[RMDB]
RNA sequence: GGGAACGACUCGAGUAGAGUCGAAAAUAAUAUGCAUGCGCUACGUAAUUAUAGCUAUAUAAUCGCGGCGCGCGCAUUAUAAUUACGAUAUGCAUGCGCGCAUUAAUUAGCUAGCCGGCCGUACGUAGUCUGUCCCUAGAUUCGUCUAGGGACAGACAAAAGAAACAACAACAACAAC
Reactivity to DMS in 0.01 (KOAc 150mM, MgCl2 10mM, bicine 150mM(pH8.5), 24C), signal-to-noise 2, nucleotides 027 to 126: u000a130a080u010a100u000g000c110a070u000g030c070g060c050u000a010c010g010u000a040a050u000u010a060u000a010g000c090u000a050u010a170u000a030a030u000c110g000c010g030g000c060g000c020g030c070g000c020a030u010u000a050u000a050a090u000u010a030c250g000a100u010a000u000g000c010a030u000g010c010g010c040g020c030a050u010u000a020a300u000u000a050g010c000u000a050g010c020c100g010g010c040c030g000u000a040c020g000u000a070
Reactivity to 2A3 in 0.01 (KOAc 150mM, MgCl2 10mM, bicine 150mM(pH8.5), 24C), signal-to-noise 1, nucleotides 027 to 126: u090a030a020u130a040u170g050c060a010u120g060c020g020c050u040a030c010g030u050a000a030u160u130a060u030a110g000c040u000a010u020a000u020a170a030u040c090g000c030g300g000c030g000c030g020c010g000c020a020u090u170a030u060a010a110u130u120a020c080g060a030u010a000u160g010c000a000u030g000c000g000c010g010c000a000u000u050a050a060u040u000a080g010c000u000a000g060c040c000g090g030c000c000g000u000a000c000g000u000a040